[RMDB]
RNA sequence: GGGAACGACUCGAGUAGAGUCGAAAAAGCUGGUAUGAGCUCAUUGAUUCUCGACCAGAGAUAUGAGUACUAGUGACAUCGUAGUAUAUCAUGUGUCCUCUCCGUGGUCUAUUCGUUCAUAUGUAGAGAUGCGUACUGCUUUCGAGUAGUGCGCAUCAAAAGAAACAACAACAACAAC
Reactivity to DMS in 0.01 (KOAc 150mM, MgCl2 10mM, bicine 150mM(pH8.5), 24C), signal-to-noise 9, nucleotides 027 to 126: a100g010c020u000g010g010u000a060u010g010a070g020c300u000c080a120u010u010g010a130u010u010c010u000c020g010a110c090c070a090g000a060g010a050u000a020u000g000a030g010u000a020c020u000a060g010u000g020a120c160a080u010c080g010u000a040g010u000a030u000a090u000c020a020u000g010u000g000u000c040c030u000c030u000c050c060g010u000g000g010u000c020u000a080u000u000c090g010u000u000c050a060u000a070u000g010u010a080g010a210
Reactivity to 2A3 in 0.01 (KOAc 150mM, MgCl2 10mM, bicine 150mM(pH8.5), 24C), signal-to-noise 9, nucleotides 027 to 126: a000g030c030u040g010g030u120a110u200g050a020g010c020u010c050a080u030u170g120a080u270u030c020u010c030g070a100c030c060a020g010a000g010a040u030a020u120g010a010g010u020a010c010u020a010g070u020g160a050c040a120u100c080g110u030a030g040u020a040u020a060u090c030a020u060g050u030g050u060c000c010u010c000u000c020c020g060u040g010g010u000c020u050a080u030u070c030g020u010u040c030a040u100a070u220g100u100a050g030a000